[RMDB]
RNA sequence: GGGAACGACUCGAGUAGAGUCGAAAAGAAAGAAAGAAGCUCAGGCUGUGACCCUCUAGAGGGAAGCACUUUCUGUUGCUUGAAAGAAGAGAAAGCGCUUCCUUUUAGAGGAUUACUCUUUGAGAAAACGUUUAGAUUAUUUCGAUAAUCUAAACGUAAAAGAAACAACAACAACAAC
Reactivity to 2A3 in 0.01 (KOAc 150mM, MgCl2 10mM, bicine 150mM(pH8.5), 24C), signal-to-noise 7, nucleotides 027 to 126: g050a010a040a010g070a020a120a010g090a050a020g030c000u010c010a020g040g010c120u030g010u010g020a020c000c010c000u000c000u000a000g000a000g000g010g000a000a000g000c000a010c020u010u010u000c010u020g270u120u080g100c060u060u100g080a170a170a060g090a020a010g020a030g000a030a000a000g000c010g000c000u000u000c000c000u000u000u000u000a000g000a000g000g000a000u000u000a000c000u010c010u080u150u090g020a030g000a040a090a010
Reactivity to DMS in 0.01 (KOAc 150mM, MgCl2 10mM, bicine 150mM(pH8.5), 24C), signal-to-noise 7, nucleotides 027 to 126: g010a100a090a100g010a110a100a110g010a130a110g010c010u000c010a020g000g010c160u000g000u000g000a020c030c000c000u000c010u000a010g010a000g000g000g000a010a010g000c000a040c000u000u000u000c010u000g000u010u010g000c070u010u030g010a100a140a230g000a040a030g000a010g000a000a000a010g000c070g000c000u000u000c000c000u000u000u000u000a010g010a010g000g000a020u000u000a020c010u000c060u010u010u000g000a040g010a080a060a090

Description:
The record gives the reactivity of an RNA of 177 nucleotides to 2A3 and DMS. The RNA was probed in 150 mM KOAc, 10 mM MgCl2 and 150 mM bicine (pH 8.5) at 24 C. It was measured as part of the RMDB libraries RFM100 and RFMREP.